[RMDB]
RNA sequence: GGGAACGACUCGAGUAGAGUCGAAAAGUCAGUUAACUGGUAGCCGUGCGACAUCCUGAUUGCCGAUGACGUAGAGGUCCCCGGUAACUCAGCGACUCAAGCUGCAAGGGACCGACUGUCUGAGCUGCGCUCCCGUAGUUUUCGAACUACGGGAGCGAAAAGAAACAACAACAACAAC
Reactivity to 2A3 in 0.01 (KOAc 150mM, MgCl2 10mM, bicine 150mM(pH8.5), 24C), signal-to-noise 3, nucleotides 027 to 126: g080u060c050a010g010u050u110a100a050c020u040g050g030u050a020g050c030c040g050u030g060c000g030a080c030a080u080c000c000u050g050a080u000u210g040c010c010g030a050u070g020a020c070g080u160a050g010a040g160g000u050c010c010c010c010g000g020u040a050a050c020u010c020a000g010c020g090a060c060u020c230a070a030g000c020u030g010c040a060a070g030g020g000a030c000c000g010a010c000u000g000u000c070u050g060a030g040c030u030g010
Reactivity to DMS in 0.01 (KOAc 150mM, MgCl2 10mM, bicine 150mM(pH8.5), 24C), signal-to-noise 2, nucleotides 027 to 126: g000u000c020a090g010u000u000a080a220c100u010g000g020u000a050g020c020c020g110u000g000c040g060a040c010a030u000c050c070u000g000a080u000u030g000c050c000g040a110u030g000a040c030g000u020a050g000a300g010g000u000c000c000c000c070g000g000u000a080a090c300u000c000a040g010c000g010a190c190u000c260a030a200g000c000u000g000c130a280a180g000g010g000a040c010c000g000a110c030u050g020u000c010u010g000a260g000c000u040g000

This 177-nucleotide RNA was probed chemically with 2A3 and DMS.
The data come from the RNA Mapping Database (RMDB), library OK1LIB.
For DMS, 2,214 sequencing reads were counted.
Conditions: 150 mM KOAc, 10 mM MgCl2 and 150 mM bicine (pH 8.5), 24 C.